This 177-nucleotide RNA was probed chemically with DMS and 2A3. The 2A3 profile rests on 6,418 reads. For 2A3 the reverse transcriptase was SuperScript II with manganese. For DMS, 4,185 sequencing reads were counted. Conditions: 150 mM KOAc, 10 mM MgCl2 and 150 mM bicine (pH 8.5), 24 C. DMS adducts were read by reverse transcription with MarathonRT.

RNA sequence: GGGAACGACUCGAGUAGAGUCGAAAAUGGAUGUUAGUCUCCAUAGACAUAGGCUCUCUCUUAAGGAGUUGAUGAUGUAUGCCGCUGAUCCAGCCAUGCACAUUGCCUCCUCUAACGCUUUUCUUGAGUAAAGAGUACAGUUCGCUGUACUCUUUACAAAAGAAACAACAACAACAAC
Reactivity to DMS in 0.01 (KOAc 150mM, MgCl2 10mM, bicine 150mM(pH8.5), 24C), signal-to-noise 4, nucleotides 027 to 126: u000g000g010a050u000g010u000u000a100g020u010c090u000c030c000a050u000a060g010a110c190a130u000a150g010g010c040u000c020u000c030u000c050u000u010a120a030g000g010a010g010u000u000g020a020u000g020a100u000g020u000a010u000g000c190c180g000c020u000g010a120u010c190c050a030g030c020c020a010u000g000c020a020c010a030u010u000g010c230c000u000c000c010u000c120u000a050a080c190g020c210u000u000u000u000c010u000u000g010a300
Reactivity to 2A3 in 0.01 (KOAc 150mM, MgCl2 10mM, bicine 150mM(pH8.5), 24C), signal-to-noise 4, nucleotides 027 to 126: u040g000g020a020u070g050u160u120a100g060u060c020u000c040c010a010u020a030g110a030c050a070u140a110g030g000c000u000c000u000c000u000c000u070u100a050a020g000g000a010g000u020u000g000a010u020g030a030u010g000u010a000u010g100c140c080g000c030u020g030a300u120c120c020a000g000c010c000a010u030g000c000a000c000a010u010u010g000c000c000u000c000c000u020c020u050a080a030c040g060c090u030u060u040u000c010u010u010g010a010